The record gives the reactivity of an RNA of 177 nucleotides to 2A3 and DMS. DMS adducts were read by reverse transcription with MarathonRT. Values cover nucleotides 27 to 126.
RNA sequence: GGGAACGACUCGAGUAGAGUCGAAAAUACGUGUUGAUGGCGCUGUUGCUCACCGGCGUGCUGCGCCUGGUGGUCCAGGCCACCCCCCUGGGGCGCUGGAUCUGGCAUGAAGCGCUGUUCGACGCGGAGAACAAUUAUUUUUCGAAAUAAUUGUUCUAAAAGAAACAACAACAACAAC
Reactivity to 2A3 in 0.01 (KOAc 150mM, MgCl2 10mM, bicine 150mM(pH8.5), 24C), signal-to-noise 9, nucleotides 027 to 126: u180a010c000g000u000g000u010u010g010a010u020g010g000c000g000c010u020g030u150u060g010c020u040c080a020c010c010g010g010c010g010u090g200c150u190g020c010g000c010c000u000g000g010u040g020g030u030c000c000a010g020g050c010c000a120c010c010c000c000c000c040u150g010g000g000g000c170g020c030u000g010g010a060u030c110u100g030g000c020a010u060g180a100a000g000c000g000c010u010g020u010u040c010g000a000c000g000c010g010g010
Reactivity to DMS in 0.01 (KOAc 150mM, MgCl2 10mM, bicine 150mM(pH8.5), 24C), signal-to-noise 7, nucleotides 027 to 126: u040a060c010g020u000g010u000u000g010a030u010g010g000c010g010c000u000g010u010u010g010c010u010c290a060c020c010g000g010c010g020u000g020c200u030g000c030g000c000c000u010g040g010u010g010g010u010c000c010a010g000g010c050c030a140c040c030c020c030c070c090u010g020g000g000g000c210g010c010u000g000g000a030u000c140u030g000g000c000a020u000g000a120a040g000c000g000c000u000g010u010u000c010g020a010c000g010c010g000g000